[RMDB]
RNA sequence: GGGAACGACUCGAGUAGAGUCGAAAAUAUUUUUCCGCUGGGAGCGUCAUAAAACCGGGCAAUGUACGAGGCUACAAGCUGGUUAAACACCAUCAUCAUACUACGAUUAUUUUGAAUACCAUAGUCUGAUCCAUAUAGGCGAUAACGUCGAAGGUUGCCACUUCAGGUGAUUCGUCACCUGAAGUGGAAAAGAAACAACAACAACAAC
Reactivity to 2A3 in 0.01 (KOAc 150mM, MgCl2 10mM, bicine 150mM(pH8.5), 24C), signal-to-noise 1, nucleotides 027 to 156: u070a000u000u200u000u000u010c050c010g020c060u080g070g000g050a170g020c000g020u140c020a040u070a160a110a080a080c090c090g000g000g000c030a050a000u060g010u050a030c000g140a060g120g000c000u000a010c020a040a010g000c040u010g000g020u040u080a010a010a010c160a010c130c000a010u010c000a030u040c000a000u050a090c040u050a010c050g110a100u030u030a170u060u260u110u060g110a070a040u120a160c010c020a000u020a030g040u040c070u030g070a150u000c020c010a090u120a040u120a160g010g050c020g050a030u020a150a020c050g000u020c000g050a040a010g080g000u010u010g000

Background
Structure probing data (2A3) for a 207-nucleotide construct. The data come from the RNA Mapping Database (RMDB), library OK3TST. 2A3 adducts were read by reverse transcription with SuperScript II with manganese. Reactivities are given for positions 27 through 156.